An RNA of 207 nucleotides, treated with DMS and 2A3 and read out base by base. For DMS, 13,254 sequencing reads were counted. DMS adducts were read by reverse transcription with MarathonRT. The data come from the RNA Mapping Database (RMDB), library OK3TST.
[RMDB]
RNA sequence: GGGAACGACUCGAGUAGAGUCGAAAAGGUCAUCAUUCGUUACACUGUGUGAAACUGUUAGACUUGAUGAUGUAAAUCAGUAAACUAAGAUCUUCUGAUUAAACGGUUCUCAUGUGGCGAAAGCCGCCGCCCCUACAUGCAACGGUAGGAGCGGCGGAUGACGCCAUCUUUUCGAAGAUGGCGUCAUAAAAGAAACAACAACAACAAC
Reactivity to DMS in 0.01 (KOAc 150mM, MgCl2 10mM, bicine 150mM(pH8.5), 24C), signal-to-noise 4, nucleotides 027 to 156: g020g010u000c030a070u000c040a120u000u010c030g020u000u010a050c040a090c080u000g010u000g030u000g010a160a090a090c020u010g000u000u000a150g000a130c080u010u010g010a060u000g010a080u010g030u000a070a060a050u000c020a040g000u000a050a060a200c100u010a100a120g010a120u000c050u010u000c030u010g000a050u000u010a060a050a090c070g010g020u000u000c040u000c020a130u000g020u000g020g020c010g000a070a070a140g000c000c000g010c010c010g010c000c010c000c000u000a020c010a070u010g010c140a050a060c080g030g020u000a010g010g010a020g000c010g010g020c000g010g000
Reactivity to 2A3 in 0.01 (KOAc 150mM, MgCl2 10mM, bicine 150mM(pH8.5), 24C), signal-to-noise 9, nucleotides 027 to 156: g110g050u080c040a100u020c010a050u130u030c010g020u030u080a050c040a040c080u060g030u020g020u020g240a110a070a030c010u020g030u060u070a080g070a130c060u090u100g040a070u080g010a040u100g130u200a040a080a000u010c010a010g040u130a030a060a090c110u100a230a070g080a260u030c040u070u020c020u060g020a040u030u080a050a080a020c020g000g020u030u000c020u000c020a020u090g010u020g030g010c020g020a020a020a040g030c010c010g000c000c000g000c010c010c000c000u000a000c000a030u120g150c070a110a040c250g040g000u000a000g000g000a000g000c000g000g000c000g000g000